RNA sequence: GGGAACGACUCGAGUAGAGUCGAAAAACUUUUAGCGAUUAUCGUUAUAGAAAUGUCCUUGGCAUAUCGCUAUGCUCAGAGGUAUUAGUAGCGCAAUAGCUAUUGAAGGACAUUACCUCUCAAAUAAGGUGCAGUAAUCAUUCGUGAUUACUGCACCAAAAGAAACAACAACAACAAC
Reactivity to DMS in 0.01 (KOAc 150mM, MgCl2 10mM, bicine 150mM(pH8.5), 24C), signal-to-noise 1, nucleotides 027 to 126: a020c040u000u000u000u000a040g020c000g000a080u010u010a100u010c050g040u010u000a010u000a090g010a090a080a070u000g000u000c020c000u010u010g010g010c020a040u000a010u030c110g000c060u000a020u000g020c050u020c120a040g020a020g020g010u010a010u010u000a020g000u000a020g030c020g030c100a090a090u020a140g010c000u010a030u000u020g000a050a050g020g000a020c010a040u000u000a040c050c010u000c000u040c220a010a060a090u020a100a120
Reactivity to 2A3 in 0.01 (KOAc 150mM, MgCl2 10mM, bicine 150mM(pH8.5), 24C), signal-to-noise 1, nucleotides 027 to 126: a000c000u090u230u000u030a000g030c040g000a080u090u110a100u300c000g000u020u020a040u020a150g110a020a060a020u060g000u010c000c040u070u000g020g000c040a060u070a040u210c010g000c000u000a000u080g010c040u000c190a060g060a030g120g160u120a100u030u090a020g010u000a000g050c020g080c030a070a130u000a010g000c010u000a000u050u120g070a040a050g000g020a000c000a000u000u000a000c030c030u050c050u050c090a050a050a070u150a200a070